RNA sequence: GGGAACGACUCGAGUAGAGUCGAAAAUGAAAGCGCGAACUCAGCCGAAAGGCACCGCGAAGAAAAACAGGAAGACGCGCAUCCCACAUCCAGCGGACUCACGCAGAGACGCGGAAGAGAAAAAAAACAUUUUAUAACGAUUCGUCGUUAUAAAAUGAAAAGAAACAACAACAACAAC
Reactivity to 2A3 in 0.01 (KOAc 150mM, MgCl2 10mM, bicine 150mM(pH8.5), 24C), signal-to-noise 2, nucleotides 027 to 126: u120g010a070a020a000g000c010g000c020g010a040a040c030u030c060a060g000c020c020g040a040a030a030g000g000c000a030c050c060g090c110g070a210a120g050a000a140a010a010a010c020a010g030g070a050a020g060a020c000g000c000g000c010a040u040c010c020c000a000c010a020u000c000c020a020g010c000g080g100a260c000u010c010a060c090g220c090a050g010a000g000a060c020g000c030g040g000a050a020g040a010g030a140a050a030a000a000a000a000a010
Reactivity to DMS in 0.01 (KOAc 150mM, MgCl2 10mM, bicine 150mM(pH8.5), 24C), signal-to-noise 3, nucleotides 027 to 126: u020g010a110a120a050g020c000g010c000g000a060a210c070u000c080a200g000c010c000g000a090a180a120g000g010c000a150c240c100g010c090g010a060a100g010a080a060a040a090a130c190a050g000g000a060a040g000a270c020g040c010g040c010a100u010c020c000c010a120c120a050u000c010c010a130g000c000g000g020a120c000u000c010a050c210g000c110a130g020a040g000a140c020g000c000g050g020a020a070g000a170g020a020a010a000a020a080a060a070a090